[RMDB]
RNA sequence: GGGAACGACUCGAGUAGAGUCGAAAAGCUCGGAGACGAGCAAGGCUGACAAAACCCUGUCCCGACCUCCACGUGGUGUCGGCUGGAUAAUGCUGCAUUAUGUUGCAUUUAUCAACUGGGAAGGAAAAUACGUAUAUCGAUUCGUCGAUAUACGUAUAAAAGAAACAACAACAACAAC
Reactivity to DMS in 0.01 (KOAc 150mM, MgCl2 10mM, bicine 150mM(pH8.5), 24C), signal-to-noise 8, nucleotides 027 to 126: g000c000u000c000g000g010a240g020a220c010g000a010g020c000a050a040g010g020c010u010g000a030c010a070a090a170a120c110c010c010u000g010u000c000c000c000g010a050c010c000u010c040c040a100c200g010u040g010g000u000g010u000c010g010g010c010u000g010g000a010u010a010a010u000g000c020u000g000c010a190u030u030a110u050g010u000u010g000c010a010u010u010u020a010u010c000a050a040c050u010g010g000g000a060a050g000g010a120a090a120
Reactivity to 2A3 in 0.01 (KOAc 150mM, MgCl2 10mM, bicine 150mM(pH8.5), 24C), signal-to-noise 9, nucleotides 027 to 126: g000c000u000c000g020g020a120g020a050c010g000a000g000c000a000a080g020g000c010u010g000a010c020a030a080a100a200c030c000c000u030g140u020c010c000c000g010a020c000c010u040c030c040a190c140g090u200g010g000u010g000u010c000g000g010c000u010g020g000a000u000a010a000u010g010c010u030g000c020a060u120u130a150u300g030u020u020g000c010a010u050u070u120a020u030c020a010a020c050u140g000g000g000a020a030g040g000a060a060a000